RNA sequence: GGGAACGACUCGAGUAGAGUCGAAAAGGCAUGGGCGAUCCUCCGAGAGAAGAGGAACGCGCUCGUGAGGUUCACCCUGAGCACGCUCUCCCAGUCAUCGAACGACAUGCGGAAGAUGAGCCCGUCCCGUCUUACCCUGUUUCGACAGGGUAAGACGAAAAGAAACAACAACAACAAC
Reactivity to DMS in 0.01 (KOAc 150mM, MgCl2 10mM, bicine 150mM(pH8.5), 24C), signal-to-noise 2, nucleotides 027 to 126: g000g000c060a090u000g000g000g040c020g030a040u000c000c050u010c000c000g010a110g020a110g020a140a100g000a160g000g000a090a070c150g000c060g000c000u010c000g030u000g010a020g010g000u000u000c090a090c020c020c000u010g000a100g030c050a050c090g000c050u000c040u000c000c010c000a120g000u010c000a110u000c180g020a110a140c120g010a060c060a060u000g030c120g010g000a060a060g000a040u020g010a140g010c010c020c010g010u000c070c010
Reactivity to 2A3 in 0.01 (KOAc 150mM, MgCl2 10mM, bicine 150mM(pH8.5), 24C), signal-to-noise 3, nucleotides 027 to 126: g030g000c050a030u100g000g010g010c010g010a000u000c000c010u000c020c000g030a060g020a010g030a230a060g130a060g150g100a090a060c050g030c040g020c070u010c010g110u140g030a060g020g010u100u050c040a100c030c000c000u030g030a020g010c020a000c100g010c010u010c010u000c040c010c010a020g010u020c010a080u110c050g080a070a100c080g020a020c040a130u120g070c080g050g030a040a010g030a100u090g010a010g010c000c010c010g020u030c010c010